An RNA of 207 nucleotides, treated with DMS and 2A3 and read out base by base.
For DMS, 4,596 sequencing reads were counted.
The RNA was probed in 150 mM KOAc, 10 mM MgCl2 and 150 mM bicine (pH 8.5) at 24 C.
DMS adducts were read by reverse transcription with MarathonRT.
Source: RMDB library M2RFPK, as collected in RNAgym.
RNA sequence: GGGAACGACUCGAGUAGAGUCGAAAAAGUUAGGUUCGCUACGGUGCAACUCUUUAAGGCAAUAACGAACUAAUUCUAAGCAAGUAAUGGAGAAAUGCCAGGGUCACUAUCUAGCCAUAAUAGUGCUGUAAGUGACUUAGAUUCGUCUAAGUCACAAGCCUUAUAAUCGGUUCGCCGAUUAUAAGGCAAAAGAAACAACAACAACAAC
Reactivity to DMS in 0.01 (KOAc 150mM, MgCl2 10mM, bicine 150mM(pH8.5), 24C), signal-to-noise 3, nucleotides 027 to 156: a070g000u000u010a090g020g010u000u010c030g020c020u000a050c040g120g050u000g000c020a050a080c110u010c100u010u000u010a090a090g010g000c040a110a060u000a020a080c020g000a040a050c040u000a040a080u010u000c070u000a100a100g000c050a060a110g010u000a100a060u020g010g000a140g000a110a060a070u000g030c000c030a100g030g020g020u000c040a040c040u000a100u010c020u000a130g010c020c080a050u000a130a060u000a080g020u000g000c000u000g010u010a070a160g000u000g000a040c000u000u000a000g000a070u000u000c300g020u010c000u000a020a010g000u000c000a010c010a050a190
Reactivity to 2A3 in 0.01 (KOAc 150mM, MgCl2 10mM, bicine 150mM(pH8.5), 24C), signal-to-noise 4, nucleotides 027 to 156: a000g080u060u040a060g000g060u040u020c040g000c050u050a040c070g070g030u060g010c060a090a120c040u050c050u090u220u180a060a030g060g000c040a060a050u070a110a040c040g020a000a010c030u020a030a050u100u050c050u130a010a060g040c060a080a010g050u100a040a060u130g060g000a090g050a060a080a050u070g000c000c030a030g010g000g000u030c000a000c030u020a020u090c030u050a030g020c020c010a030u050a100a050u030a090g070u050g030c060u040g040u130a170a080g000u010g000a000c000u000u000a000g000a010u040u020c020g000u000c100u000a000a000g000u000c010a000c000a000a000